[RMDB]
An RNA of 207 nucleotides, treated with 2A3 and read out base by base. It was measured as part of the RMDB library OK3TST. The RNA was probed in 150 mM KOAc, 10 mM MgCl2 and 150 mM bicine (pH 8.5) at 24 C.
RNA sequence: GGGAACGACUCGAGUAGAGUCGAAAAACUAAGUAGCCAAGUGUAUAAUGGUGAGCCACUUGAUCUCCCUGGUUUCAAGUAGUUACCCCACUUAUAAAAUAGGGCAGAGUGGGAGGAAUGGGGAGAUGAAUCUAUGAUUCGUUUAUCCAUUCAACAGGCAUAGGGAUCAGUUCGCUGAUCCCUAUGCAAAAGAAACAACAACAACAAC
Reactivity to 2A3 in 0.01 (KOAc 150mM, MgCl2 10mM, bicine 150mM(pH8.5), 24C), signal-to-noise 1, nucleotides 027 to 156: a000c170u240a270a050g100u100a050g000c000c050a010a010g020u030g040u060a110u040a130a140u130g080g000u070g000a020g080c020c000a010c020u010u040g050a080u040c040u000c030c000c010u040g100g030u040u040u030c050a070a060g010u050a030g040u080u170a100c000c000c020c050a030c030u090u080a070u070a200a140a070a200u120a070g070g000g000c010a010g040a000g040u040g010g000g050a110g000g010a030a000u040g000g000g000g000a010g000a000u000g000a000a000u000c220u300a090u300g010a020u030u000c010g010u010u030u000a020u010c000c000a000u040u000c040a010a000c040a040g080